[RMDB]
RNA sequence: GGGAACGACUCGAGUAGAGUCGAAAAUAUGCGAAUUCUCCAAACGGAGUGAGCAGCGUAUUCAUCGCUGGAAUAUCGCGAUGAUCAUUCCAGGACGGAGACAGGUUUCAUGCAGAUCAGAACAGAUCAGUAUUUAUGAUUUCGAUCAUAAAUACUGAAAAGAAACAACAACAACAAC
Reactivity to DMS in 0.01 (KOAc 150mM, MgCl2 10mM, bicine 150mM(pH8.5), 24C), signal-to-noise 7, nucleotides 027 to 126: u030a040u030g010c040g010a090a100u010u000c000u010c000c010a040a300a240c150g000g000a020g020u010g000a040g010c040a050g000c050g030u010a040u010u000c010a050u000c090g020c080u020g000g020a180a070u020a050u070c130g010c000g000a050u020g010a050u010c010a030u000u000c010c000a060g010g000a300c250g000g010a010g000a040c300a070g000g000u020u010u010c020a060u010g020c060a030g010a060u000c100a050g000a090a120c090a080g000a110u000
Reactivity to 2A3 in 0.01 (KOAc 150mM, MgCl2 10mM, bicine 150mM(pH8.5), 24C), signal-to-noise 2, nucleotides 027 to 126: u260a060u070g030c030g050a040a090u110u020c010u000c000c000a100a080a060c070g000g000a010g010u030g010a010g030c070a020g020c040g060u050a050u010u040c040a080u100c090g060c170u170g060g060a040a020u090a040u260c060g000c040g060a090u100g010a010u010c010a010u010u000c000c000a020g050g030a030c110g020g000a020g020a020c030a030g080g040u030u060u060c040a040u150g030c020a020g030a120u090c020a030g080a150a070c020a030g060a110u020
The record gives the reactivity of an RNA of 177 nucleotides to DMS and 2A3. For 2A3, 46,414 sequencing reads were counted. Conditions: 150 mM KOAc, 10 mM MgCl2 and 150 mM bicine (pH 8.5), 24 C. Source: RMDB library OK1LIB, as collected in RNAgym. DMS adducts were read by reverse transcription with MarathonRT. 2A3 adducts were read by reverse transcription with SuperScript II with manganese.